Chemical mapping of a 177-nucleotide RNA with 2A3.
The 2A3 profile rests on 627 reads.
Values are in units of 0.01, from 0 to 300, in steps of 10.
Values cover nucleotides 27 to 126.
The RNA was probed in 150 mM KOAc, 10 mM MgCl2 and 150 mM bicine (pH 8.5) at 24 C.
It was measured as part of the RMDB library RFM100.
[RMDB]
RNA sequence: GGGAACGACUCGAGUAGAGUCGAAAAACGCCGUACGCGGCGAAUCUCAAGGCCCUGUCUCCCAACCCUUGUACCAGUGCUGUGCCUCAGACCCUGGUACAGGCCUGGGGGACAGGGACUUGGGGAAACCCGCUAGCGGUUUCGACCGCUAGCGGGUAAAAGAAACAACAACAACAAC
Reactivity to 2A3 in 0.01 (KOAc 150mM, MgCl2 10mM, bicine 150mM(pH8.5), 24C), signal-to-noise 1, nucleotides 027 to 126: a000c010g000c000c000g010u000a000c240g000c000g110g000c020g010a040a090u110c000u020c000a000a100g050g000c000c020c000u000g000u000c000u000c010c060c010a040a070c020c000c020u050u190g000u000a000c000c000a010g000u000g040c000u040g090u200g180c060c070u230c010a080g010a300c000c000c000u000g010g000u000a000c000a000g030g010c000c010u000g000g000g000g000g010a000c000a000g000g000g000a000c000u000u000g000g000g000g000a030a030